Chemical mapping of a 207-nucleotide RNA with 2A3. Conditions: 150 mM KOAc, 10 mM MgCl2 and 150 mM bicine (pH 8.5), 24 C. 2A3 is a SHAPE reagent: it acylates the 2'-hydroxyl of flexible nucleotides of all four kinds.
RNA sequence: GGGAACGACUCGAGUAGAGUCGAAAACCAGCUUGCCUGUGUCCUAGGGAAUUGGAAGAUCAUCCUUCACAGGAUCGUGUGGAAGUCCUGCUCGGGGCGGAAGCAUUAAAACCAUUCGAGCUAGUCAAAAACCGGCUGAUCUUCGGAUCAGCCGGAAGAGCUAUUUUAGGUUCGCCUAAAAUAGCUCAAAAGAAACAACAACAACAAC
Reactivity to 2A3 in 0.01 (KOAc 150mM, MgCl2 10mM, bicine 150mM(pH8.5), 24C), signal-to-noise 1, nucleotides 027 to 156: c000c000a010g050c070u040u170g040c000c000u030g010u020g010u070c060c030u050a070g060g040g070a130a110u200u100g070g000a080a000g060a060u150c030a050u020c040c000u060u020c000a010c000a020g040g030a040u070c020g030u030g000u010g030g020a040a010g000u010c000c010u080g080c070u030c100g000g000g000g010c010g010g010a030a020g000c000a000u070u150a040a060a030a090c100c000a020u100u180c010g000a010g030c090u100a040g190u240c070a050a070a000a080a120c010c000g000g010c000u000g000a000u000c000u010u000c110g000g000a000u000c000a000g000c000c000g000g000a000a000